[RMDB]
Chemical mapping of a 177-nucleotide RNA with 2A3 and DMS. It was measured as part of the RMDB libraries RFM100 and RFMREP.
RNA sequence: GGGAACGACUCGAGUAGAGUCGAAAAUGUGCUGGGCGACACGCGGGCUACAAUGGCCGAGACAGUGGGAUGCAACGCCGAAAGGCGACGCUAAUCUCCGAAACUCGGUCGUAGUUCGGAUUGCGGAUUAUUCUAAAAAAUUCGUUUUUUAGAAUAAAAAAGAAACAACAACAACAAC
Reactivity to 2A3 in 0.01 (KOAc 150mM, MgCl2 10mM, bicine 150mM(pH8.5), 24C), signal-to-noise 9, nucleotides 027 to 126: u150g020u040g020c030u060g010g050g030c020g020a020c010a010c090g100c010g010g000g000c000u000a000c030a060a210u300g000g000c000c000g010a000g020a030c050a020g040u300g070g010g000a000u020g000c010a030a030c000g000c000c000g020a050a030a020g000g000c010g010a010c060g000c000u080a070a020u000c010u010c000c010g040a080a060a040c000u000c000g000g000u000c010g000u000a000g000u010u010c010g010g040a080u040u130g030c030g010g010a010
Reactivity to DMS in 0.01 (KOAc 150mM, MgCl2 10mM, bicine 150mM(pH8.5), 24C), signal-to-noise 9, nucleotides 027 to 126: u020g020u010g010c020u010g000g010g010c040g020a090c070a050c140g020c020g010g000g000c010u010a000c020a140a110u040g010g000c010c000g000a020g010a050c120a090g000u060g010g010g000a010u010g000c020a070a280c010g010c000c000g000a090a090a150g000g010c000g010a020c300g000c010u010a070a030u000c000u010c000c010g010a110a110a090c000u000c000g000g010u000c010g000u000a010g000u000u000c020g000g000a150u020u010g010c030g010g000a160